RNA sequence: GGGAACGACUCGAGUAGAGUCGAAAAGACUGGUACCCACUGUCAGGUAGGCCCCAUAACAGUGCAGGGUUGCCUGGAAGGAAGCGGUAGGUUUGGUAAAGGACAGGGCCGUUGAGCUUUUAGAAGACCGUACUACUAUGUUCGCAUAGUAGUACGGAAAAGAAACAACAACAACAAC
Reactivity to DMS in 0.01 (KOAc 150mM, MgCl2 10mM, bicine 150mM(pH8.5), 24C), signal-to-noise 6, nucleotides 027 to 126: g000a060c020u000g000g010u010a050c020c000c000a160c050u010g010u010c020a020g010g020u010a040g010g020c000c010c030c040a080u030a120a130c250a110g010u010g020c170a170g020g010g010u000u010g010c030c010u000g000g010a050a040g000g000a100a080g010c070g010g020u000a050g010g000u000u000u010g010g010u020a050a070a080g000g010a070c070a050g010g010g000c040c050g020u010u010g010a100g000c040u010u010u000u010a090g010a120a080g000a250
Reactivity to 2A3 in 0.01 (KOAc 150mM, MgCl2 10mM, bicine 150mM(pH8.5), 24C), signal-to-noise 6, nucleotides 027 to 126: g040a020c040u080g040g080u120a070c000c010c000a020c020u030g060u050c020a010g000g050u120a090g060g090c020c000c010c000a100u170a180a050c060a060g110u090g140c090a050g060g000g000u050u030g030c010c010u020g000g020a040a030g030g030a120a020g020c020g020g020u050a040g020g030u000u030u090g040g020u070a080a100a040g030g010a030c050a040g020g000g000c020c000g010u010u090g020a040g010c000u020u040u060u080a060g010a160a020g060a060